Chemical mapping of a 177-nucleotide RNA with 2A3 and DMS. DMS adducts were read by reverse transcription with MarathonRT. 2A3 adducts were read by reverse transcription with SuperScript II with manganese. The DMS profile rests on 718 reads. As a SHAPE reagent, 2A3 marks flexible, mostly unpaired nucleotides at the ribose 2'-OH.
RNA sequence: GGGAACGACUCGAGUAGAGUCGAAAAUGCAUACGGAGUUAAUGCAUACAUAUGUUGUGCUGUUAAUGAUGUAGCAACACCUAAACUGGCUAAUGCUAAACCUAAUUGCAUGUGUAAAGAAUUUGUGGUCCCGUUCUCUAUUCGUAGAGAACGGGACAAAAGAAACAACAACAACAAC
Reactivity to 2A3 in 0.01 (KOAc 150mM, MgCl2 10mM, bicine 150mM(pH8.5), 24C), signal-to-noise 2, nucleotides 027 to 126: u020g000c050a060u010a020c000g010g030a030g030u030u020a010a000u010g020c000a000u000a010c020a060u300a150u290g150u200u030g000u050g000c070u050g030u010u000a020a000u060g010a000u020g000u000a000g000c020a000a010c010a070c040c000u080a150a020a050c090u040g090g030c030u080a090a050u050g000c040u110a120a080a080c020c040u070a090a110u120u060g030c010a020u030g060u010g100u110a030a130a020g070a140a230u060u150u210g300u140g060
Reactivity to DMS in 0.01 (KOAc 150mM, MgCl2 10mM, bicine 150mM(pH8.5), 24C), signal-to-noise 1, nucleotides 027 to 126: u040g030c010a080u010a010c050g000g000a300g020u000u000a080a030u000g000c000a000u000a020c060a200u020a150u000g000u020u010g040u000g000c040u010g030u000u000a020a030u000g000a260u040g000u020a060g020c010a050a050c130a140c010c120u020a070a090a170c140u000g000g000c030u000a120a040u000g000c060u010a020a050a050c100c110u020a140a080u000u000g010c050a000u000g000u000g000u010a020a140a040g030a090a060u000u010u000g000u030g020